[RMDB]
RNA sequence: GGGAACGACUCGAGUAGAGUCGAAAAGAUAUGGACCUAGGCCUCGACUGGGACGAAGAACGGAAGAAAUGAUCGGAAACGAUCAUUUCUUCCGGGAGUCCCAGAGAACGAGGCUAGGUCCUAAGUCCAUACUGCUAUUGUUCGCAAUAGCAGUAUGAAAAGAAACAACAACAACAAC
Reactivity to 2A3 in 0.01 (KOAc 150mM, MgCl2 10mM, bicine 150mM(pH8.5), 24C), signal-to-noise 3, nucleotides 027 to 126: g050a030u120a070u230g010g000a010c000c000u040a070g300g300c010c000u030c020g110a200c050u030g000g020g010a000c010g070a140a150g030a240a050c020g030g000a010a000g000a020a010a000u000g000a000u010c010g020g040a080a030a040c000g000a000u020c000a010u000u000u000c000u000u000c000c000g010g000g010a010g000u000c010c000c010a000g000a000g000a040a020c010g000a000g000g000c000u000a000g000g000u000c000c000u000a000a000g010u000c010
Reactivity to DMS in 0.01 (KOAc 150mM, MgCl2 10mM, bicine 150mM(pH8.5), 24C), signal-to-noise 8, nucleotides 027 to 126: g010a100u010a300u010g010g010a010c000c000u000a010g040g010c000c000u010c000g020a220c000u000g000g000g010a010c000g000a100a150g000a150a260c020g000g000a030a010g000a010a010a010u000g000a010u010c000g010g000a110a110a240c010g010a010u000c000a000u000u000u000c000u000u000c000c000g010g000g000a080g010u000c000c000c000a010g000a060g010a090a100c010g000a010g010g010c000u000a000g000g010u000c000c000u000a000a070g000u000c060